Background: Source: RMDB library OK1LIB, as collected in RNAgym. Structure probing data (2A3) for a 177-nucleotide construct. The RNA was probed in 150 mM KOAc, 10 mM MgCl2 and 150 mM bicine (pH 8.5) at 24 C.
[RMDB]
RNA sequence: GGGAACGACUCGAGUAGAGUCGAAAAAGCUGGUUAGGGCCUCGGCAAGCGCCACGGACAGCAGCUUCCCUCAACACGCCCGCGCUCAACUCUUCGCACCGGCAGACGAUCGUUGCGUCGUCAGGCUCCCGGCUGCGUAGUUCGCUACGCAGCCGGGAAAAGAAACAACAACAACAAC
Reactivity to 2A3 in 0.01 (KOAc 150mM, MgCl2 10mM, bicine 150mM(pH8.5), 24C), signal-to-noise 1, nucleotides 027 to 126: a010g090c090u110g050g250u180u070a140g000g130g210c060c010u010c040g040g010c140a130a030g180c040g020c200c000a000c000g090g010a000c000a030g060c000a000g000c000u010u000c000c050c000u070c000a130a120c100a000c110g000c000c000c010g000c000g040c000u080c120a080a070c010u000c000u040u040c040g000c050a010c000c000g000g000c000a000g100a010c000g000a000u040c030g120u220u100g050c060g000u000c000g000u000c000a020g080g030c060u000